[RMDB]
RNA sequence: GGGAACGACUCGAGUAGAGUCGAAAACGUCGUGAACUAGCGACAAUGCCGUAGAUCUAUCGUUAUCUAACCGAAACAUCGUGACUAGUCGUAGAAUAGAACCAGGAGGGGACGCUGUCAAACAAAGACGUGGUCUUAGAUUCGUCUAAGGCCACGUAAAAGAAACAACAACAACAAC
Reactivity to DMS in 0.01 (KOAc 150mM, MgCl2 10mM, bicine 150mM(pH8.5), 24C), signal-to-noise 9, nucleotides 027 to 126: c140g010u000c020g020u010g010a080a100c120u020a110g000c040g000a030c050a090a080u020g010c030c020g000u010a060g000a030u000c050u020a070u010c080g010u010u010a060u010c040u000a050a100c100c040g000a080a080a090c160a050u010c040g010u010g000a070c040u010a050g020u010c040g010u010a060g020a060a080u020a070g000a060a090c060c030a050g000g000a080g000g000g000g000a060c070g020c030u000g000u010c050a040a060a070c140a060a110a080g000
Reactivity to 2A3 in 0.01 (KOAc 150mM, MgCl2 10mM, bicine 150mM(pH8.5), 24C), signal-to-noise 8, nucleotides 027 to 126: c050g010u000c010g010u020g060a100a080c060u030a080g010c000g010a010c010a020a040u070g010c010c010g010u040a020g010a100u000c020u030a090u050c060g050u090u050a050u040c030u040a040a070c040c010g040a090a030a010c030a060u060c020g030u030g040a050c020u020a040g050u040c030g040u050a020g050a070a060u070a050g030a050a010c010c010a030g010g060a030g010g030g010g000a010c020g010c040u020g020u020c020a080a120a120c040a040a190a020g100
Chemical mapping of a 177-nucleotide RNA with DMS and 2A3. It was measured as part of the RMDB library OK1LIB. For 2A3 the reverse transcriptase was SuperScript II with manganese. The 2A3 profile rests on 14,246 reads. The DMS profile rests on 28,047 reads. The RNA was probed in 150 mM KOAc, 10 mM MgCl2 and 150 mM bicine (pH 8.5) at 24 C.